[RMDB]
RNA sequence: GGGAACGACUCGAGUAGAGUCGAAAAAAAAGAUGUCUGAGACAAACACGCUUCACAAUGUGCGGCAAAGAAACAUUGUUUAUGCAAAGGCACUUCGCAAUGUGUGCUCAAACAUUGCUUAUUCAAAAAAAGAUUUUAGACUUCGGUCUAAAAUCAACUAUGUCUGCUUCUUCGGAAGCAGACAUAGAAAAGAAACAACAACAACAAC
Reactivity to 2A3 in 0.01 (KOAc 150mM, MgCl2 10mM, bicine 150mM(pH8.5), 24C), signal-to-noise 1, nucleotides 027 to 156: a010a000a030a080g100a100u140g000u040c100u050g100a070g020a100c080a010a160a000c050a000c080g000c000u000u000c000a000c000a030a020u010g020u020g000c010g000g060c110a140a000a080g080a000a050a000c010a000u000u000g070u080u100u190a160u150g070c060a020a100a080g110g000c000a000c000u020u000c040g010c010a030a030u000g000u000g050u000g040c010u090c200a010a080a000c000a010u000u000g000c000u050u130a150u070u130c080a080a080a000a050a020a000a020g000a000u000u000u000u000a000g030a000c010u040u040c290g060g010u000c000u000a000a010a000a000u000c000a000a000